Structure probing data (2A3 and DMS) for a 177-nucleotide construct. The 2A3 profile rests on 1,221 reads. DMS (dimethyl sulfate) methylates the pairing face of unpaired adenines and cytosines. Values cover nucleotides 27 to 126. Conditions: 150 mM KOAc, 10 mM MgCl2 and 150 mM bicine (pH 8.5), 24 C.
[RMDB]
RNA sequence: GGGAACGACUCGAGUAGAGUCGAAAAAGGCGGUGAUGACAAAAAACAUUUCUCGAUGCUGAAACUUACUCGAGAGACCAAAUCACUCUUGUAAUCUUUCGUGAUGCUUGUUUUUAUGCGUGUCUGAUUGGUGUAUCCAAUUCGUUGGAUACACCAAAAAAGAAACAACAACAACAAC
Reactivity to 2A3 in 0.01 (KOAc 150mM, MgCl2 10mM, bicine 150mM(pH8.5), 24C), signal-to-noise 3, nucleotides 027 to 126: a010g060g010c050g010g000u060g000a090u010g000a050c080a010a150a000a000a050a020c060a050u090u130u060c120u000c010g030a040u100g100c060u050g110a120a040a010c020u040u050a030c000u040c000g000a010g010a000g030a030c030c000a100a000a040u150c030a070c030u070c030u040u070g050u090a060a090u060c020u040u120u060c060g090u040g020a050u080g030c060u030u020g010u070u030u020u010u060a200u240g070c090g030u000g030u000c040u000g060a120
Reactivity to DMS in 0.01 (KOAc 150mM, MgCl2 10mM, bicine 150mM(pH8.5), 24C), signal-to-noise 6, nucleotides 027 to 126: a070g020g010c040g010g000u010g010a050u010g000a070c100a010a040a060a070a080a040c060a080u010u010u000c030u010c020g000a070u010g020c100u020g020a070a070a070c130u010u000a030c040u010c050g000a000g030a140g010a060c110c140a050a080a160u020c080a060c020u010c050u000u000g000u010a040a050u010c090u000u010u010c070g030u000g000a050u010g020c130u000u000g010u000u000u010u020u020a060u030g000c140g020u010g010u000c010u000g000a300